[RMDB]
RNA sequence: GGGAACGACUCGAGUAGAGUCGAAAAGAUAUGGACCGCAAGGGAGCCUAAGUCGGAAACGACAAGGCGAAGAACUUGACGGUCCUAAGUCAAAACGAACAAUUAAUCUUCGGAUUAAUUGUUCGAAGACGAUAUAACUGUUCGCAGUUAUAUCGUCAAAAGAAACAACAACAACAAC
Reactivity to DMS in 0.01 (KOAc 150mM, MgCl2 10mM, bicine 150mM(pH8.5), 24C), signal-to-noise 4, nucleotides 027 to 126: g020a030u000a300u010g010g000a000c000c000g010c010a000a020g000g050g000a130g020c000c000u000a110a100g010u000c000g030g010a060a040a140c000g000a010c000a190a050g010g020c000g020a080a130g000a100a150c000u000u000g000a120c000g010g000u010c000c000u010a000a070g010u010c030a060a080a090a200c030g010a010a000c000a000a010u000u000a000a010u010c000u000u020c200g010g010a020u000u000a000a000u000u000g000u000u000c000g000a050a050
Reactivity to 2A3 in 0.01 (KOAc 150mM, MgCl2 10mM, bicine 150mM(pH8.5), 24C), signal-to-noise 5, nucleotides 027 to 126: g030a010u060a020u060g000g000a000c000c010g000c000a010a010g020g030g030a030g000c010c020u120a300a040g010u010c010g000g040a060a030a030c000g000a000c020a030a020g010g000c030g090a130a030g020a020a020c010u040u010g190a280c000g000g000u000c000c000u000a010a000g010u010c010a020a020a070a120c020g000a000a000c000a000a010u010u020a010a010u000c010u060u110c300g030g000a000u000u000a000a010u010u000g000u000u010c000g000a010a010